[RMDB]
RNA sequence: GGGAACGACUCGAGUAGAGUCGAAAAUAAAAUAGCGUAAUGGACAUUGGGAGUGUACGCUAAGUGUGUGUUGUAUACCUAAGGUGCAAUUGAACACACACACAGUUGCACCUAAUGUCCAUAAAAACAUUACUACAACCUUCGGGUUGUAGUAAUGAAAAGAAACAACAACAACAAC
Reactivity to DMS in 0.01 (KOAc 150mM, MgCl2 10mM, bicine 150mM(pH8.5), 24C), signal-to-noise 4, nucleotides 027 to 126: u020a060a050a080a130u020a120g010c160g010u010a130a030u000g010g000a010c010a020u010u010g010g000g020a100g010u020g050u010a010c180g020c060u000a080a170g020u000g000u000g010u000g010u000u010g020u010a080u010a060c020c020u010a100a090g020g010u000g020c090a050a100u010u010g010a040a030c020a010c010a010c030a010c020a060c210a040g010u000u000g000c010a030c000c000u000a010a010u000g000u010c000c010a010u000a010a030a080a070a070
Reactivity to 2A3 in 0.01 (KOAc 150mM, MgCl2 10mM, bicine 150mM(pH8.5), 24C), signal-to-noise 2, nucleotides 027 to 126: u190a000a060a020a090u130a010g160c080g050u110a070a010u020g000g010a000c000a010u010u000g000g030g000a160g140u120g010u050a030c090g000c060u060a210a260g000u020g000u000g000u000g000u000u080g040u070a100u050a060c010c050u100a170a160g110g010u100g030c040a070a090u070u190g110a090a000c000a010c000a000c000a000c000a000c020a010g000u060u050g000c020a010c010c000u010a010a010u000g000u000c000c000a000u010a000a000a000a000a000